Structure probing data (2A3 and DMS) for a 207-nucleotide construct.
2A3 is a SHAPE reagent: it acylates the 2'-hydroxyl of flexible nucleotides of all four kinds.
In probing experiments dimethyl sulfate is read out at A N1 and C N3, which are open when not base-paired.
Source: RMDB library M2RFPK, as collected in RNAgym.
DMS adducts were read by reverse transcription with MarathonRT.
The reactions ran in a buffer of 150 mM KOAc, 10 mM MgCl2 and 150 mM bicine (pH 8.5), at 24 C.
2A3 adducts were read by reverse transcription with SuperScript II with manganese.
The DMS profile rests on 3,653 reads.
RNA sequence: GGGAACGACUCGAGUAGAGUCGAAAAGUAUCCCUAGAUGAUAAAACACCGCACAUGGCUCGUAAGAGCGGUUAAAUUAGCAAGUAAUGCAAAUUACGCGAAGUAACGCAUGGCCUAGGCUCGUUAGAAAAGGGAGAAUCCUUCGGGAUUCUCCCAAGUUUUGAUUAUGGUUCGCCAUAAUCAAAACAAAAGAAACAACAACAACAAC
Reactivity to 2A3 in 0.01 (KOAc 150mM, MgCl2 10mM, bicine 150mM(pH8.5), 24C), signal-to-noise 3, nucleotides 027 to 156: g040u040a080u090c000c000c000u020a080g030a180u150g040a040u110a120a080a020a010c050a040c020c020g030c010a020c010a130u090g100g000c040u070c100g110u100a030a080g040a020g080c040g000g000u030u050a040a090a070u060u090a020g010c050a140a000g070u120a100a020u040g010c070a040a040a080u060u010a020c030g010c010g100a060a020g050u070a030a010c040g000c050a050u070g000g080c000c010u000a010g000g000c000u010c160g010u020u020a030g100a080a140a040a060g000g000g000a030g010a010a000u000c000c000u020u060c160g070g000g000a000u000u000c000u010c000c000c000a000a000
Reactivity to DMS in 0.01 (KOAc 150mM, MgCl2 10mM, bicine 150mM(pH8.5), 24C), signal-to-noise 2, nucleotides 027 to 156: g010u010a170u000c000c010c020u000a150g030a110u000g000a110u000a070a080a100a240c060a110c040c020g030c030a110c070a080u000g020g020c010u000c020g010u000a140a160g020a060g020c030g000g000u020u000a100a070a180u010u000a140g040c050a100a100g000u000a060a070u000g000c100a070a090a040u000u000a000c030g050c040g010a070a200g000u000a070a020c060g050c040a040u000g000g020c030c000u000a090g020g020c010u000c060g000u000u000a080g010a030a080a100a200g010g020g010a020g000a050a020u000c000c000u000u000c250g050g050g000a000u000u010c010u000c000c000c000a010a000